An RNA of 207 nucleotides, treated with 2A3 and DMS and read out base by base. The reactions ran in a buffer of 150 mM KOAc, 10 mM MgCl2 and 150 mM bicine (pH 8.5), at 24 C. The 2A3 profile rests on 2,100 reads. The DMS profile rests on 4,543 reads.
RNA sequence: GGGAACGACUCGAGUAGAGUCGAAAAUAAUGAGACUACUAAACUAAAAGUUCUUGGAGGUUGGCUCACCCAGGAAUACAAAAAUAGGACUUGUGAUGAGUGCUUCAAGCUAGUAAGUCAGAACGACUUGACCAGGCCAGGGUAUAUUGAGGAGUUAACAAUAAACACAAUUCGUUGUGUUUAUUGUAAAAGAAACAACAACAACAAC
Reactivity to 2A3 in 0.01 (KOAc 150mM, MgCl2 10mM, bicine 150mM(pH8.5), 24C), signal-to-noise 3, nucleotides 027 to 156: u150a010a100u090g030a030g020a040c010u040a000c030u060a090a130a090c060u080a140a150a090a080g040u060u020c010u000u050g010g000a070g060g030u130u110g080g020c030u030c010a020c020c010c020a010g020g040a030a020u100a090c100a050a090a000a030a020u120a090g020g030a020c000u060u050g020u020g050a100u020g030a020g000u040g010c010u040u050c020a020a000g020c010u020a030g030u080a090a000g000u010c010a010g050a150a040c050g030a010c020u020u040g040a040c010c010a020g030g000c030c010a000g040g010g000u040a070u020a030u100u120g030a030g030g000a020g040u060u060a020
Reactivity to DMS in 0.01 (KOAc 150mM, MgCl2 10mM, bicine 150mM(pH8.5), 24C), signal-to-noise 2, nucleotides 027 to 156: u020a090a050u010g010a100g010a100c010u010a060c030u010a090a100a140c030u000a030a120a110a160g000u000u000c050u010u010g000g000a130g030g010u000u000g020g010c030u000c020a100c040c000c000a060g000g010a090a070u000a230c050a020a080a080a090a170u000a090g010g010a080c020u000u010g020u000g000a080u000g010a100g030u000g020c030u000u000c030a060a070g020c040u000a060g020u000a010a100g020u000c020a070g020a080a140c040g000a020c010u020u000g010a060c000c020a090g000g030c000c050a070g000g010g030u000a080u000a100u000u010g000a080g010g000a110g060u000u000a060